[RMDB]
RNA sequence: GGGAACGACUCGAGUAGAGUCGAAAAACACAGGGAAGGAGGUGGUCCGACAAAUUGAGUGAUUUAUGGACAUGUGAGGUGGCUGCCCGCUAGCAGCGCCGGGGUAAAGCCUGCGCGCGCUGGCGAAUAAGGGCUUGAAAUUCGUUUCAAGCCCUUAAAAAGAAACAACAACAACAAC
Reactivity to DMS in 0.01 (KOAc 150mM, MgCl2 10mM, bicine 150mM(pH8.5), 24C), signal-to-noise 5, nucleotides 027 to 126: a080c110a070c100a080g000g000g010a050a060g000g000a040g010g010u010g010g020u000c020c010g000a080c150a060a050a060u020u010g010a100g020u010g000a080u010u000u020a090u030g000g000a030c050a090u020g010u010g010a090g000g020u000g000g000c040u000g010c060c040c010g000c000u010a000g010c000a110g040c000g000c020c010g000g000g000g010u010a080a090a260g000c010c000u000g000c160g010c010g020c010g000c000u010g020g000c000g010a050a070
Reactivity to 2A3 in 0.01 (KOAc 150mM, MgCl2 10mM, bicine 150mM(pH8.5), 24C), signal-to-noise 3, nucleotides 027 to 126: a000c060a010c030a010g050g040g020a030a050g030g000a050g010g040u060g030g000u020c000c010g070a060c060a030a110a110u160u170g050a030g070u120g070a190u060u100u110a090u140g020g000a020c040a060u050g020u020g050a040g020g030u010g000g040c000u000g080c020c030c010g000c000u000a000g000c200a030g000c000g000c000c010g000g000g000g040u050a050a030a050g090c000c000u030g010c020g000c000g000c000g010c140u010g000g000c000g000a000a000
Chemical mapping of a 177-nucleotide RNA with DMS and 2A3. For 2A3, 1,694 sequencing reads were counted. Reactivities are given for positions 27 through 126. It was measured as part of the RMDB libraries RFM100 and RFMREP. Conditions: 150 mM KOAc, 10 mM MgCl2 and 150 mM bicine (pH 8.5), 24 C. DMS (dimethyl sulfate) methylates the pairing face of unpaired adenines and cytosines. 2A3 adducts were read by reverse transcription with SuperScript II with manganese.